[RMDB]
RNA sequence: GGGAACGACUCGAGUAGAGUCGAAAAUCUGUCACUGUCAGGAAAGUGGUAAAACUGCAACUCAAUUACUGCAAUGCCCUCGUAAUUAAGUGAAUUUACAAUAUCGUCCUGUUCGGAGGGAAGAACGCGGGAUGUUCAUUCUUCAUCACUUUUAAUAGGGUUUUAUACGUUUCGACGUAUAAAACCCAAAAGAAACAACAACAACAAC
Reactivity to 2A3 in 0.01 (KOAc 150mM, MgCl2 10mM, bicine 150mM(pH8.5), 24C), signal-to-noise 1, nucleotides 027 to 156: u000c000u000g030u030c050a040c100u080g050u040c010a000g130g000a140a080a010g010u000g030g000u010a000a010a080a080c070u040g060c060a030a020c000u000c140a120a280u130u080a110c020u010g000c060a000a080u110g000c030c010c000u040c050g080u120a130a150u080u060a110a000g020u010g090a030a060u110u100u040a070c050a080a030u060a050u130c050g000u000c010c000u000g020u050u080c010g000g000a110g010g040g000a070a000g010a060a000c040g040c030g110g030g000a050u040g000u040u020c020a060u040u000c010u100u020c010a040u000c010a010c130u000u270u040u000a200a150u300a240
Record summary:
Structure probing data (2A3) for a 207-nucleotide construct. Conditions: 150 mM KOAc, 10 mM MgCl2 and 150 mM bicine (pH 8.5), 24 C. For 2A3, 750 sequencing reads were counted.